Description:
Structure probing data (2A3) for a 207-nucleotide construct. It was measured as part of the RMDB library RNAMAK. For 2A3, 1,179 sequencing reads were counted.

RNA sequence: GGGAACGACUCGAGUAGAGUCGAAAAUAAUACCGCUGGGUUGAGAACUACAGUUGGAGGCAAGCAACAGCUUCUGAAGCGCGCACGGAAGACAUGCUUGUGAAGACUGCUCAACCUGUGCUGAAGCGCGCACGGCAACCGAAAGGUGCGAUGGGGGCCAUCAAUAGACCUUCGGGUCUAUUGAUGGAAAAGAAACAACAACAACAAC
Reactivity to 2A3 in 0.01 (KOAc 150mM, MgCl2 10mM, bicine 150mM(pH8.5), 24C), signal-to-noise 2, nucleotides 027 to 156: u130a010a040u040a110c070c030g000c010u020g000g010g010u000u020g010a000g000a050a030c070u130a040c280a000g000u010u010g020g030a000g070g160c010a000a020g000c050a060a110c040a210g010c000u010u000c000u050g050a170a060g000c010g000c000g000c000a000c010g000g000a020a000g000a020c100a220u300g010c000u020u010g020u130g080a000a010g010a000c000u000g010c000u000c000a000a000c000c010u000g010u000g000c000u030g030a070a030g000c010g000c000g010c000a030c010g000g000c020a000a020c000c000g020a120a020a010g060g000u000g010c020g040a150u190g010g000g020g030g060